This 177-nucleotide RNA was probed chemically with 2A3. Reactivities are given for positions 27 through 126. Conditions: 150 mM KOAc, 10 mM MgCl2 and 150 mM bicine (pH 8.5), 24 C. It was measured as part of the RMDB libraries RFM100 and RFMREP.
RNA sequence: GGGAACGACUCGAGUAGAGUCGAAAAGUAAGAGUAGAAGGAUCCAUGAAGCAAUAAUUCUCUUUGCUAAAAUGUGUGAUAAAACAUUGACUCCUGGUAUUUCACUCUUACAGUGCCCAUUGAUUAAGUUCAGCGUCAAGUUCGCUUGACGCUGAACAAAAGAAACAACAACAACAAC
Reactivity to 2A3 in 0.01 (KOAc 150mM, MgCl2 10mM, bicine 150mM(pH8.5), 24C), signal-to-noise 2, nucleotides 027 to 126: g010u010a010a010g010a000g000u120a060g000a000a000g000g040a040u080c000c000a000u010g000a030a010g050c020a020a020u040a130a200u300u010c080u040c010u220u110u090g020c020u090a120a260a000a080u080g040u000g030u060g060a080u190a200a100a060a010c110a030u150u060g060a080c000u030c000c010u010g030g000u000a030u000u010u000c000a000c000u000c000u010u000a000c010a000g000u000g000c000c000c000a000u030u120g140a020u050u100a160a000